[RMDB]
Record summary: Structure probing data (DMS and 2A3) for a 177-nucleotide construct. Source: RMDB library TTRDEL, as collected in RNAgym. Reactivities are rounded to 0.1 and cut off at 0 and 3. Values cover nucleotides 27 to 126. DMS adducts were read by reverse transcription with MarathonRT. The RNA was probed in 150 mM KOAc, 10 mM MgCl2 and 150 mM bicine (pH 8.5) at 24 C.
RNA sequence: GGGAACGACUCGAGUAGAGUCGAAAAGAUAUGGAAUGGAACUACAUGCAGGAGGGCAUCGGAAACGAUGCCUCCCCACCCUGUAGAUUGCCAUUCCUAAGUCAAAACCCCUAGUUCGCUAGGGGAACUCACAGUAAGUGUUCGCACUUACUGUGAGAAAAGAAACAACAACAACAAC
Reactivity to DMS in 0.01 (KOAc 150mM, MgCl2 10mM, bicine 150mM(pH8.5), 24C), signal-to-noise 3, nucleotides 027 to 126: g000a020u000a300u010g000g000a040a010u010g000g000a050a060c010u000a010c040a010u000g020c260a140g030g010a050g010g000g020c000a000u000c000g020g000a130a080a180c000g010a010u000g000c000c000u000c000c010c000c030a060c290c100c050u010g000u000a000g000a090u010u010g000c000c000a000u000u000c000c000u000a000a050g000u000c040a070a050a100a140c000c000c000c000u000a010g010u000u010c300g030c010u000a010g020g000g000g010a000a020
Reactivity to 2A3 in 0.01 (KOAc 150mM, MgCl2 10mM, bicine 150mM(pH8.5), 24C), signal-to-noise 3, nucleotides 027 to 126: g040a010u080a050u150g010g000a000a000u010g000g010a020a060c020u040a010c030a060u080g030c050a030g000g030a030g030g110g060c000a000u000c000g010g050a060a070a010c010g010a000u000g000c010c000u030c000c000c000c000a080c030c010c000u000g030u020a010g050a240u170u300g170c000c000a000u000u000c000c000u010a080a020g080u030c010a010a020a100a300c000c000c000c000u000a010g030u060u080c300g010c200u000a000g000g000g000g010a010a030